[RMDB]
RNA sequence: GGGAACGACUCGAGUAGAGUCGAAAAGGAGGACAUUCUGUGGCAUCUAGUAUUCCUAUCCUCCCACUGGUACCUGCUCCUAUAUAGAAUAAUCUACCUCCCUGUUUCAUUCUAUCUACUAUUAUAUGCAUCAUAUGCGCUUCGGCGCAUAUGAUGCAAAAGAAACAACAACAACAAC
Reactivity to 2A3 in 0.01 (KOAc 150mM, MgCl2 10mM, bicine 150mM(pH8.5), 24C), signal-to-noise 1, nucleotides 027 to 126: g040g000a000g010g000a090c090a170u200u140c160u220g100u070g040g000c000a040u010c010u050a080g060u040a210u060u000c000c000u000a010u020c000c000u000c000c040c000a120c030u080g000g040u060a110c000c010u050g000c000u050c000c000u040a040u000a000u020a130g060a090a120u120a080a000u060c030u060a050c000c030u040c000c000c000u010g080u050u100u070c090a060u000u080c010u010a030u060c010u140a140c010u000a080u200u090a300u000a040u290